[RMDB]
RNA sequence: GGGAACGACUCGAGUAGAGUCGAAAACGUCGAGCGCGCCGGCGAAACCGAGCUCGAUCGCGCGGUCCGUGAGUUCGAAGAGGCGCUGGCGACCGGCGACGAAGCGCUCAUCGAGCGCACCGCGGCGGCGAUGGAACGCGCCGAAAAGGCAGAGCUGCUACGUUAGGGAAUUCGUUCCCUAACGUAGAAAAGAAACAACAACAACAAC
Reactivity to 2A3 in 0.01 (KOAc 150mM, MgCl2 10mM, bicine 150mM(pH8.5), 24C), signal-to-noise 4, nucleotides 027 to 156: c010g000u000c000g020a120g100c180g000c010g000c040c000g000g010c010g030a120a020a030c030c000g000a020g000c000u010c020g100a160u190c010g010c010g000c070g030g030u160c110c030g040u030g030a010g000u010u020c030g030a150a040g040a140g190g020c010g000c000u000g000g000c000g010a070c030c020g030g010c010g000a010c040g040a060a030g000c010g010c020u010c020a190u130c130g020a030g130c010g000c020a010c000c010g010c020g010g000c000g010g010c010g020a030u080g050g080a100a060c090g010c000g000c000c010g050a120a110a010a010g040g020c080a010g020a010g070c070u120g010
Reactivity to DMS in 0.01 (KOAc 150mM, MgCl2 10mM, bicine 150mM(pH8.5), 24C), signal-to-noise 2, nucleotides 027 to 156: c040g060u020c040g000a070g000c040g040c030g030c040c020g040g020c010g010a040a060a120c080c020g000a050g020c010u010c000g020a070u000c090g000c030g000c040g040g010u010c040c030g000u010g030a110g020u000u010c010g020a070a100g010a230g020g000c000g030c000u070g000g010c020g000a050c030c010g040g000c000g000a100c040g010a060a090g140c010g020c000u000c020a140u010c150g000a050g030c050g030c030a060c020c000g030c020g010g000c000g010g020c000g000a120u010g000g020a070a080c070g040c000g000c000c030g010a050a000a070a100g010g000c040a110g000a110g010c030u000g020
This 207-nucleotide RNA was probed chemically with 2A3 and DMS. Values cover nucleotides 27 to 156. 2A3 adducts were read by reverse transcription with SuperScript II with manganese.